The record gives the reactivity of an RNA of 207 nucleotides to 2A3. Reactivities are given for positions 27 through 156. For 2A3 the reverse transcriptase was SuperScript II with manganese. It was measured as part of the RMDB library OK3TST.

RNA sequence: GGGAACGACUCGAGUAGAGUCGAAAAUCUGGGAUUAUUUGCCAUAACCGAGUAUGACAUGACCGCACUACAGAGUGCAUUAAAAUUUUACUGGCUUCUCAGGCAAGUUCCCCAGCUCCAGUGUGUGCUUCAGGCAGGCGGUCUGAUGGGGAGUCCAACCAUCCGUAGGUUUCGACCUACGGAUGGUAAAAGAAACAACAACAACAAC
Reactivity to 2A3 in 0.01 (KOAc 150mM, MgCl2 10mM, bicine 150mM(pH8.5), 24C), signal-to-noise 1, nucleotides 027 to 156: u030c000u010g050g000g020a050u060u050a080u180u210u150g000c010c020a140u120a080a030c060c060g030a060g030u150a150u190g070a050c060a060u150g120a120c000c080g000c010a060c020u220a150c120a110g120a020g090u030g040c010a000u040u080a020a030a000a080u110u240u000u120a080c010u000g000g020c000u060u040c030u000c080a010g000g010c010a010a010g010u030u120c020c000c000c000a010g010c010u000c020c020a070g010u000g020u000g010u030g100c010u080u100c000a070g130g000c000a030g040g010c070g080g000u000c030u010g030a040u020g020g000g000g000a030g000u070c000c050a010